[RMDB]
RNA sequence: GGGAACGACUCGAGUAGAGUCGAAAAGAUAUGGAAUCGAGGAUCGGUUUCUGAAAUGUGGGAACCCGACCGUCGGAAACGACGGAAUCGGAAACCACAUUUCAGAAACCGGGAGAUUCCUAAGUCACAAAAUGCUAAGGUUCGCCUUAGCAUUUUGAAAAGAAACAACAACAACAAC
Reactivity to DMS in 0.01 (KOAc 150mM, MgCl2 10mM, bicine 150mM(pH8.5), 24C), signal-to-noise 2, nucleotides 027 to 126: g010a050u010a300u020g020g000a020a020u000c000g010a080g000g000a030u000c020g000g000u000u010u000c010u000g000a030a000a000u010g030u010g000g000g000a170a300c300c030c000g000a010c020c010g000u010c000g020g000a170a150a210c010g000a010c000g000g000a090a080u010c010g060g000a050a040a240c000c010a010c000a000u010u000u000c000a010g020a010a020a000c000c010g000g020g000a070g000a010u000u000c010c000u000a040a050g000u000c020a210
The record gives the reactivity of an RNA of 177 nucleotides to DMS. Conditions: 150 mM KOAc, 10 mM MgCl2 and 150 mM bicine (pH 8.5), 24 C. The DMS profile rests on 1,397 reads. The data come from the RNA Mapping Database (RMDB), library TTRINS.